[RMDB]
RNA sequence: GGGAACGACUCGAGUAGAGUCGAAAACAGGUUCGCCGCAGCCACGGGGUUGCCACGUUCUCGUGUGAGGCGAAAGUGUCUCUGAGGCGGGGUGCCGAAGGUCUCAUAAGUAGGCGUUGCGGAACCCUCUUGGGUGCCUCUUCGGGGGUACCCAAGAAAAAGAAACAACAACAACAAC
Reactivity to 2A3 in 0.01 (KOAc 150mM, MgCl2 10mM, bicine 150mM(pH8.5), 24C), signal-to-noise 9, nucleotides 027 to 126: c040a020g040g010u040u040c050g030c060c010g000c020a010g020c010c020a050c060g150g010g000g020u140u300g040c000c000a020c010g050u300u140c010u000c010g110u210g090u070g130a000g000g010c030g050a090a100a030g150u160g010u000c000u000c000u020g010a010g010g010c020g000g000g000g010u030g020c000c000g040a090a020g100g030u020c030u010c060a170u180a170a060g040u100a050g050g010c080g100u110u070g010c010g010g000a020a020c000c000c000
Reactivity to DMS in 0.01 (KOAc 150mM, MgCl2 10mM, bicine 150mM(pH8.5), 24C), signal-to-noise 7, nucleotides 027 to 126: c120a100g000g010u010u010c060g010c020c010g000c030a080g000c090c070a110c100g000g000g000g010u010u050g030c030c020a040c020g010u010u050c020u000c000g010u020g020u020g000a040g010g010c000g010a040a080a120g020u030g000u000c010u010c020u020g000a050g010g020c050g000g000g000g020u000g020c000c020g000a120a080g000g000u020c020u000c040a160u050a100a110g020u040a050g000g000c050g010u010u010g000c020g000g000a060a020c020c000c050

Record summary: An RNA of 177 nucleotides, treated with 2A3 and DMS and read out base by base. For DMS, 29,752 sequencing reads were counted. For DMS the reverse transcriptase was MarathonRT. For 2A3, 19,707 sequencing reads were counted. The reactions ran in a buffer of 150 mM KOAc, 10 mM MgCl2 and 150 mM bicine (pH 8.5), at 24 C.